[RMDB]
RNA sequence: GGGAACGACUCGAGUAGAGUCGAAAACAGAAUGAGAGCAGAAACAAAGGGAUCCCAAGGGAAGAGGCUAUUCCCAAGCCCCCACAGCUUGCGCACUGCUGCUAGAGUUACCAUGAGGCCAUGAUGGCUUGAUGGUUUUCAAAUGUGAAAAGCUGUACGAUUAAUUUACCUUCGGGUAAAUUAAUCGAAAAGAAACAACAACAACAAC
Reactivity to 2A3 in 0.01 (KOAc 150mM, MgCl2 10mM, bicine 150mM(pH8.5), 24C), signal-to-noise 2, nucleotides 027 to 156: c050a000g160a090a140u160g020a050g070a010g110c020a020g070a110a050a100c090a100a110a080g020g000g000a040u090c020c040c090a060a110g040g010g010a100a040g070a040g150g000c010u040a070u070u060c000c010c010a040a030g040c070c000c000c000c000a060c000a030g000c000u020u040g020c020g010c030a030c030u060g030c030u070g000c040u130a030g010a030g170u050u040a010c000c000a000u000g090a000g020g030c030c010a030u300g090a100u160g140g010c010u000u000g030a010u000g000g000u010u010u050u020c010a020a040a010u070g000u020g030a130a080a050a030g020c010u000g010u040a050
Reactivity to DMS in 0.01 (KOAc 150mM, MgCl2 10mM, bicine 150mM(pH8.5), 24C), signal-to-noise 1, nucleotides 027 to 156: c060a080g010a060a070u000g010a120g010a090g000c010a120g010a190a060a170c040a050a130a090g010g010g000a080u000c000c030c040a090a130g020g000g010a110a070g010a080g010g060c040u000a060u000u010c010c010c010a170a170g000c000c010c000c040c050a020c010a050g050c010u010u000g030c080g040c010a100c060u010g010c030u000g000c050u000a190g010a170g050u010u010a030c000c010a030u010g000a010g000g030c010c000a130u000g010a250u050g030g040c010u000u000g010a060u010g000g000u000u010u000u000c050a180a120a180u000g000u000g000a060a040a040a070g030c000u000g020u010a300